[RMDB]
RNA sequence: GGGAACGACUCGAGUAGAGUCGAAAAUCCGGAGCUCCUUCUCGAGAUCCUCAGCUUUUUUCCUUGAGUUCACCCACUGCUCGAGGACGUCUUCCCUUCCCCCGCGAUUCUUCUUCGACUCGGCCCGCUAGAUGAAGAGGUUCGCCUCUUCAUCUAGAAAAGAAACAACAACAACAAC
Reactivity to DMS in 0.01 (KOAc 150mM, MgCl2 10mM, bicine 150mM(pH8.5), 24C), signal-to-noise 2, nucleotides 027 to 126: u010c050c050g020g000a110g020c050u010c030c050u000u000c050u000c040g020a120g010a090u010c040c020u000c050a060g000c030u000u000u000u000u000u000c020c020u010u010g010a100g010u010u010c070a140c030c040c020a190c080u000g010c020u000c000g010a030g000g000a090c130g010u000c060u000u000c020c010c000u000u000c000c000c000c000c090g020c060g010a030u010u000c020u000u000c020u000u000c010g000a020c070u000c020g000g000c000c000c010g010
Reactivity to 2A3 in 0.01 (KOAc 150mM, MgCl2 10mM, bicine 150mM(pH8.5), 24C), signal-to-noise 1, nucleotides 027 to 126: u020c000c020g050g010a050g000c020u000c010c000u140u080c030u050c040g040a070g020a060u020c030c020u050c030a040g060c000u110u110u000u010u120u100c000c000u030u080g070a030g030u090u070c070a100c060c000c000a040c020u050g000c010u010c000g020a000g010g030a100c020g030u020c060u050u020c010c000c050u000u040c030c000c020c000c000g000c000g010a010u030u010c000u020u000c000u050u080c030g000a000c030u000c000g030g000c030c010c010g040

Overview:
The record gives the reactivity of an RNA of 177 nucleotides to DMS and 2A3. For 2A3, 1,225 sequencing reads were counted. Conditions: 150 mM KOAc, 10 mM MgCl2 and 150 mM bicine (pH 8.5), 24 C. It was measured as part of the RMDB library 15KREP. The DMS profile rests on 2,049 reads.